Source information:
Chemical mapping of a 177-nucleotide RNA with 2A3 and DMS. Reactivities are given for positions 27 through 126. The reactions ran in a buffer of 150 mM KOAc, 10 mM MgCl2 and 150 mM bicine (pH 8.5), at 24 C.
RNA sequence: GGGAACGACUCGAGUAGAGUCGAAAACACGGCUCAUCUUUCCACGAAGGUGAUUGAAAGCUCUUUUCUCCCACUUGUGCGAAGGGUGGGACCUCCUUUUAACCUGGGGAAAUACCAUUUGCCGAAGGGACUGGUAAUGCUUCGGCAUUACCAGUCCAAAAGAAACAACAACAACAAC
Reactivity to 2A3 in 0.01 (KOAc 150mM, MgCl2 10mM, bicine 150mM(pH8.5), 24C), signal-to-noise 1, nucleotides 027 to 126: c070a010c060g020g000c030u000c010a020u000c030u000u010u020c020c000a000c030g110a100a010g070g010u120g020a090u020u070g080a090a020a090g050c100u080c000u250u070u050u000c020u020c000c000c000a030c030u080u140g000u060g060c120g020a050a000g020g020g020u010g000g000g010a010c000c000u150c000c000u090u160u060u070a020a060c000c070u040g050g000g020g000a010a130a040u170a110c050c030a130u010u000u120g000c060c000g010a050a050g050
Reactivity to DMS in 0.01 (KOAc 150mM, MgCl2 10mM, bicine 150mM(pH8.5), 24C), signal-to-noise 1, nucleotides 027 to 126: c120a170c270g010g000c010u020c010a010u000c000u000u000u010c010c010a050c070g000a040a050g000g010u000g010a010u000u000g000a030a020a090g010c250u030c090u050u010u000u000c030u010c100c010c030a030c100u010u010g010u000g010c170g040a050a040g000g010g040u010g000g000g000a080c080c030u030c100c090u000u000u000u000a010a070c120c030u010g000g000g000g000a060a140a140u030a160c120c030a160u050u030u000g000c010c010g000a120a050g050